[RMDB]
RNA sequence: GGGAACGACUCGAGUAGAGUCGAAAACAUGAACCUGCAUUGAUUACGUCCCUGCCCCUGUACACACCGCCCGUCGCUACUACGGAUUGAAUUAUUUAGUGAGGUCUCUGACGCCUUGCGUGUUACGGAACGAAAAGUUGUUCGCAACUUUUCGUUCAAAAGAAACAACAACAACAAC
Reactivity to 2A3 in 0.01 (KOAc 150mM, MgCl2 10mM, bicine 150mM(pH8.5), 24C), signal-to-noise 2, nucleotides 027 to 126: c060a070u110g040a000a040c050c010u050g020c050a070u030u150g030a040u110u190a030c070g030u040c000c020c000u030g000c000c020c000c000u000g020u100a030c050a000c030a030c040c010g000c040c010c000g040u020c020g010c050u050a040c020u010a060c040g000g070a010u010u060g080a120a140u170u130a150u060u300u020a050g000u000g040a000g000g030u000c030u010c030u060g050a060c020g000c020c020u020u030g020c010g000u020g020u020u110a060c080g050
Reactivity to DMS in 0.01 (KOAc 150mM, MgCl2 10mM, bicine 150mM(pH8.5), 24C), signal-to-noise 2, nucleotides 027 to 126: c120a070u010g020a040a100c050c010u010g010c040a130u000u010g020a100u010u010a060c090g000u000c000c000c000u000g010c030c010c020c030u020g030u000a030c100a060c080a090c090c060g010c060c020c020g000u000c070g000c030u000a000c040u010a080c070g010g000a080u010u000g020a070a110u000u000a100u010u020u010a100g020u020g000a050g020g000u000c030u000c070u000g000a130c130g000c000c030u000u000g020c030g010u030g000u010u000a090c230g010
Annotation
This 177-nucleotide RNA was probed chemically with 2A3 and DMS. The 2A3 profile rests on 1,652 reads. For DMS the reverse transcriptase was MarathonRT. The RNA was probed in 150 mM KOAc, 10 mM MgCl2 and 150 mM bicine (pH 8.5) at 24 C.